[RMDB]
RNA sequence: GGGAACGACUCGAGUAGAGUCGAAAAUUCUCAGCACUCAUCAAGAAGUAGGCUUAGGCCAAUUGCUUGGUGGUGAAAGUAGAGGGAAGGUAGCACCUCGACGCCUCUAAGUACGCUGUGGGAGUAGAAAACUGGACAUCGUUCGCGAUGUCCAGAACCAUAGCAAAUACUUCGGUAUUUGCUAUGGAAAAGAAACAACAACAACAAC
Reactivity to DMS in 0.01 (KOAc 150mM, MgCl2 10mM, bicine 150mM(pH8.5), 24C), signal-to-noise 2, nucleotides 027 to 156: u000u020c000u010c000a100g010c040a080c030u020c000a010u000c010a050a030g030a040a050g040u000a130g040g020c000u000u000a220g040g000c000c000a050a050u000u000g000c010u020u000g000g030u010g030g040u010g030a070a050a150g000u000a040g010a050g040g010g000a090a060g010g010u000a170g030c100a300c000c000u000c020g000a100c050g020c010c010u010c030u000a020a120g000u000a060c050g000c020u000g020u010g000g010g000a200g000u000a150g010a080a060a090a230c020u000g010g020a040c000a010u010c010g020u010u010c300g040c010g010a010u000g000u010c000c020a000g000a020a100
Reactivity to 2A3 in 0.01 (KOAc 150mM, MgCl2 10mM, bicine 150mM(pH8.5), 24C), signal-to-noise 4, nucleotides 027 to 156: u040u000c020u020c010a010g040c010a010c060u210c020a020u020c010a010a010g020a100a030g070u080a040g030g000c030u070u110a100g140g000c020c030a060a080u070u060g030c010u010u010g000g000u000g000g010u020g040a090a050a000g080u040a010g000a000g020g020g030a080a030g050g010u080a020g040c060a110c090c000u030c040g030a040c030g140c000c000u030c010u010a060a020g060u040a040c050g000c100u060g000u080g040g030g050a090g030u150a030g110a080a090a060a060c000u000g000g000a000c000a000u010c010g030u050u030c110g000c020g070a000u000g000u000c000c000a000g000a000a000